RNA sequence: GGGAACGACUCGAGUAGAGUCGAAAACGCCAUCGCCAGCCAACGCGUUCGGCCAGAUCGUCGAGUUUUCGGGUGGCCUUGGCCACAUCGCCGAGAUCCAGCAGCGCGCGGACUUCCAUUAGCGGCACCGACCCAGACACUUCGGUGUCUGGGUCGGAAAAGAAACAACAACAACAAC
Reactivity to 2A3 in 0.01 (KOAc 150mM, MgCl2 10mM, bicine 150mM(pH8.5), 24C), signal-to-noise 2, nucleotides 027 to 126: c110g070c040c000a090u090c050g000c050c000a010g040c040c030a060a030c090g000c000g000u080u060c140g020g060c050c010a060g020a050u030c030g130u010c000g140a060g090u070u100u230u130c090g010g000g040u020g000g000c030c020u160u300g140g000c000c000a020c000a100u110c010g000c020c000g090a080g000a030u000c000c000a000g000c000a000g020c060g070c080g000c020g030g000a010c020u060u000c040c030a120u120u100a060g080c040g010g000c040a020
Notes: Source: RMDB library OK1LIB, as collected in RNAgym. An RNA of 177 nucleotides, treated with 2A3 and read out base by base. The reactions ran in a buffer of 150 mM KOAc, 10 mM MgCl2 and 150 mM bicine (pH 8.5), at 24 C. For 2A3, 621 sequencing reads were counted. For 2A3 the reverse transcriptase was SuperScript II with manganese.